[RMDB]
RNA sequence: GGGAACGACUCGAGUAGAGUCGAAAAGCUGAAGACAAGAAAGCAAAAAUUGUCAGUGCUAUGCAAACUAUGUUGUUUGGUAUGAUUAAGAAGCUCGACAACGAUGUUCUUAAUGGUAUCAUUUCUACCGGUGCUAACUUCGGUUAGCACAAAAGAAACAACAACAACAAC
Reactivity to 2A3 in 0.01 (KOAc 150mM, MgCl2 10mM, bicine 150mM(pH8.5), 24C), signal-to-noise 3, nucleotides 027 to 129: g000c020u040g050a130a000g000a070c000a000a000g110a100a090a040g210c060a060a170a040a000a050u030u020g000u000c050a060g090u050g090c010u110a010u120g170c070a050a050a030c020u000a120u110g020u010u000g000u010u030u000g030g000u030a060u120g110a010u120u000a040a000g040a050a020g090c000u050c030g040a060c000a160a090c070g090a050u200g070u060u010c030u040u020a000a000u040g080g000u000a050u030c010a020u000u010u040c000u020a050c060c000g100
Reactivity to DMS in 0.01 (KOAc 150mM, MgCl2 10mM, bicine 150mM(pH8.5), 24C), signal-to-noise 3, nucleotides 027 to 129: g010c040u080g020a120a110g010a020c050a030a090g060a120a140a080g050c300a050a050a060a030a040u000u020g000u040c000a140g060u000g000c060u090a060u000g020c000a030a050a080c070u060a030u000g030u050u000g080u050u020u020g040g030u030a000u110g010a030u020u000a000a050g050a010a080g040c060u030c030g030a150c300a070a140c010g020a020u000g030u000u000c050u040u080a040a150u040g040g060u050a010u030c070a100u010u070u010c070u000a100c220c090g040
Chemical mapping of a 170-nucleotide RNA with 2A3 and DMS. The DMS profile rests on 6,878 reads. 2A3 adducts were read by reverse transcription with SuperScript II with manganese. It was measured as part of the RMDB library 15KLIB. The RNA was probed in 150 mM KOAc, 10 mM MgCl2 and 150 mM bicine (pH 8.5) at 24 C.